The record gives the reactivity of an RNA of 207 nucleotides to 2A3 and DMS. The 2A3 profile rests on 2,513 reads. For DMS, 3,084 sequencing reads were counted.
RNA sequence: GGGAACGACUCGAGUAGAGUCGAAAAGUGCCUCGUCGGCCCGGCAUGCCAACCUGAUCCGAAGUUCACGGUGGUUUCUCUGGCCUUCCAGAGAGAUGCGCGUCGGAAGAACCGACGAACAAACCUUAAAACAAAACGACGUUCGCGUCGUUUUGAACACAAGGCUUAAGUUCGCUUAAGCCUUGUGAAAAGAAACAACAACAACAAC
Reactivity to 2A3 in 0.01 (KOAc 150mM, MgCl2 10mM, bicine 150mM(pH8.5), 24C), signal-to-noise 2, nucleotides 027 to 156: g050u020g070c020c020u010c010g010u000c000g000g050c030c000c000g000g020c030a030u130g020c010c020a080a110c050c030u070g040a070u050c040c070g190a220a100g090u140u120c060a040c100g000g010u040g010g000u000u090u000c010u000c000u010g040g000c040c060u280u160c040c010a000g000a000g010a000g000a060u160g040c040g000c020g050u000c000g000g020a090a070g020a080a080c000c000g010a010c010g010a030a010c060a030a070a060c020c010u190u250a060a100a020a020c010a000a000a000a000c000g000a000c000g010u040u100c230g010c000g080u020c000g000u000u000u000u000g000a010a000
Reactivity to DMS in 0.01 (KOAc 150mM, MgCl2 10mM, bicine 150mM(pH8.5), 24C), signal-to-noise 1, nucleotides 027 to 156: g020u000g000c080c000u000c020g020u000c000g000g020c020c020c010g030g020c030a110u020g010c020c100a110a080c000c000u000g000a050u000c080c060g000a120a160g000u010u000c030a090c040g030g000u000g010g030u000u000u000c000u000c000u000g000g010c230c180u000u020c000c000a050g010a060g010a040g020a070u010g000c010g020c000g010u000c000g000g000a110a090g000a140a050c000c020g000a020c010g020a030a090c010a050a120a080c060c030u000u000a070a070a100a280c000a020a010a020a010c010g020a010c000g030u000u000c300g030c050g050u000c000g030u000u000u010u000g020a080a160